[RMDB]
RNA sequence: GGGAACGACUCGAGUAGAGUCGAAAAAAUGUCUGUCAAUAUUGGAUUGGAUAUGGGUGCAAUUGUGACUCGCUUAGGCAAGCAGCACUGCCCCAAUCUAAAGAUUCCAAUUUUUUAAACGAGUCCGGGACCACUUAGUUCGCUAAGUGGAAAAGAAACAACAACAACAAC
Reactivity to DMS in 0.01 (KOAc 150mM, MgCl2 10mM, bicine 150mM(pH8.5), 24C), signal-to-noise 8, nucleotides 027 to 129: a010a010u020g030u020c030u030g040u050c170a070a040u000a020u000u000g000g000a040u000u000g000g000a040u010a100u040g000g000g000u050g040c000a040a090u050u030g030u000g000a150c040u030c130g040c000u020u040a100g030g050c180a090a030g000c050a060g020c000a050c040u000g020c010c000c000c000a000a000u000c010u000a040a060a080g030a140u020u010c010c050a030a040u010u010u010u010u020u010a020a090a070c000g010a030g000u020c000c060g000g010g010a230
Reactivity to 2A3 in 0.01 (KOAc 150mM, MgCl2 10mM, bicine 150mM(pH8.5), 24C), signal-to-noise 9, nucleotides 027 to 129: a000a000u210g030u030c050u040g130u080c040a090a080u040a020u100u010g010g000a010u010u050g010g000a010u060a300u160g010g010g000u220g010c040a100a120u180u090g040u030g120a300c010u030c110g000c000u030u010a090g090g120c070a020a010g000c010a000g000c000a000c010u010g000c000c000c000c000a000a000u000c000u030a060a050a030g170a060u060u030c000c010a000a010u030u020u000u020u040u160a070a090a020c050g000a010g020u010c040c010g010g020g040a020